[RMDB]
RNA sequence: GGGAACGACUCGAGUAGAGUCGAAAAGAAAAUAAGUGAUGGAUGGAAGCGUCAAACCAAACAUCGCAAUGACGCUAAAGAAUGGAGAACAGCAACUCCAUGGAAACAAAAGCUGUAAUAAAAAAAAGACUAUUGUAAGUUUCGACUUACAAUAGUCAAAAGAAACAACAACAACAAC
Reactivity to 2A3 in 0.01 (KOAc 150mM, MgCl2 10mM, bicine 150mM(pH8.5), 24C), signal-to-noise 1, nucleotides 027 to 126: g000a020a070a030a050u210a140a000g030u010g030a030u030g010g010a010u010g000g060a130a000g060c020g130u090c030a060a070a010c010c030a070a030a000c010a040u090c010g000c010a020a040u110g030a020c020g000c060u050a160a000a010g050a040a040u080g000g000a000g020a140a000c000a000g000c040a050a010c020u000c000c000a000u060g070g100a120a110a000c040a030a050a030a000g000c000u000g010u060a120a020u120a100a100a070a000a010a000a000a000
Reactivity to DMS in 0.01 (KOAc 150mM, MgCl2 10mM, bicine 150mM(pH8.5), 24C), signal-to-noise 1, nucleotides 027 to 126: g000a190a040a070a130u000a080a070g010u000g010a010u000g030g000a170u000g000g010a130a060g000c040g010u000c070a120a180a060c070c020a030a050a100c090a040u000c050g000c060a020a080u000g000a080c050g000c020u010a060a110a030g000a090a040u030g000g000a000g100a020a070c000a000g000c050a080a070c000u000c020c010a010u000g000g000a120a030a030c080a040a030a080a300g000c010u000g000u000a100a080u030a030a000a040a020a090a160a140a220